[RMDB]
RNA sequence: GGGAACGACUCGAGUAGAGUCGAAAAGGAUCUGCACCAUCCUUCCAGGAGCAGCUGCAGAUGGCUUGCCUUGGCACAUACAUUCAGCAUCUGCAGAGAAAUGGACAUGGCUGGAGACUUUGAGUCCCAUGGCCGACACCUGGAAUGCGACAGGGCAAAUUAAAUAUCGCUUCGGCGAUAUUUAAUUAAAAGAAACAACAACAACAAC
Reactivity to DMS in 0.01 (KOAc 150mM, MgCl2 10mM, bicine 150mM(pH8.5), 24C), signal-to-noise 2, nucleotides 027 to 156: g000g000a110u000c040u000g000c030a090c020c000a150u000c020c000u010u020c020c000a020g030g000a170g010c030a150g030c030u000g010c010a100g000a040u000g010g030c030u010u010g040c060c030u000u010g020g000c070a150c190a140u000a100c050a130u010u000c100a080g040c000a040u010c010u010g020c030a000g000a160g000a060a080a080u000g000g020a050c040a070u000g010g060c070u020g010g020a100g020a050c050u000u000u000g010a130g000u000c000c010c000a070u000g010g010c010c000g020a050c060a070c010c010u000g000g000a070a010u000g000c080g030a060c040a070g000g010g000c020a070
Reactivity to 2A3 in 0.01 (KOAc 150mM, MgCl2 10mM, bicine 150mM(pH8.5), 24C), signal-to-noise 4, nucleotides 027 to 156: g060g010a080u040c040u110g000c030a040c010c000a000u000c000c000u020u000c000c000a010g020g030a070g020c130a030g030c020u010g000c010a000g000a020u010g080g090c050u040u080g010c030c030u130u190g080g040c080a040c010a130u300a030c020a080u090u190c040a040g010c000a010u000c000u010g000c010a010g000a000g000a000a120a020u150g030g020a020c030a040u060g020g020c090u080g140g050a130g040a080c040u150u230u300g080a060g020u000c000c000c010a050u050g030g010c010c010g030a020c010a030c030c010u000g010g010a010a020u080g010c080g010a010c040a270g010g010g020c000a000

The data come from the RNA Mapping Database (RMDB), library OK3TST. Structure probing data (DMS and 2A3) for a 207-nucleotide construct. DMS adducts were read by reverse transcription with MarathonRT. For DMS, 5,274 sequencing reads were counted. For 2A3 the reverse transcriptase was SuperScript II with manganese.